The record gives the reactivity of an RNA of 177 nucleotides to DMS and 2A3. 2A3 adducts were read by reverse transcription with SuperScript II with manganese. The 2A3 profile rests on 3,860 reads. For DMS the reverse transcriptase was MarathonRT. The RNA was probed in 150 mM KOAc, 10 mM MgCl2 and 150 mM bicine (pH 8.5) at 24 C.
RNA sequence: GGGAACGACUCGAGUAGAGUCGAAAAGAUAUGGAGAAUCAUCGGACCGAAGAACAUGGUUCGGAAACGAACCAUGGGAGGUCUGAUGAGUUCUCCUAAGUCAAAGGCGCCACUUCGGUGGCGCCAAGACUAAGACUAGGUUCGCCUAGUCUUAGUCAAAAGAAACAACAACAACAAC
Reactivity to DMS in 0.01 (KOAc 150mM, MgCl2 10mM, bicine 150mM(pH8.5), 24C), signal-to-noise 2, nucleotides 027 to 126: g010a060u010a300u010g010g010a020g010a030a080u010c000a000u000c000g000g000a020c000c000g000a120a220g020a170a170c010a010u000g010g000u000u000c000g000g000a080a040a140c030g010a020a000c000c000a020u010g000g040g020a050g010g020u000c010u000g020a000u010g000a030g000u000u000c010u000c000c010u000a000a090g000u010c030a060a130a130g000g090c000g030c000c000a030c010u000u020c180g000g090u000g030g060c000g020c000c020a000a020
Reactivity to 2A3 in 0.01 (KOAc 150mM, MgCl2 10mM, bicine 150mM(pH8.5), 24C), signal-to-noise 1, nucleotides 027 to 126: g030a000u100a040u210g010g020a010g000a020a040u040c000a010u010c010g000g000a000c000c040g110a300a020g000a050a010c000a000u000g000g010u000u000c010g020g010a050a040a000c010g000a010a000c000c000a000u020g030g000g020a030g000g020u000c020u030g010a000u000g010a000g000u020u010c000u010c000c000u010a110a020g010u000c040a000a000a260g000g020c000g050c030c010a040c060u100u210c300g140g020u040g030g120c050g000c010c010a020a000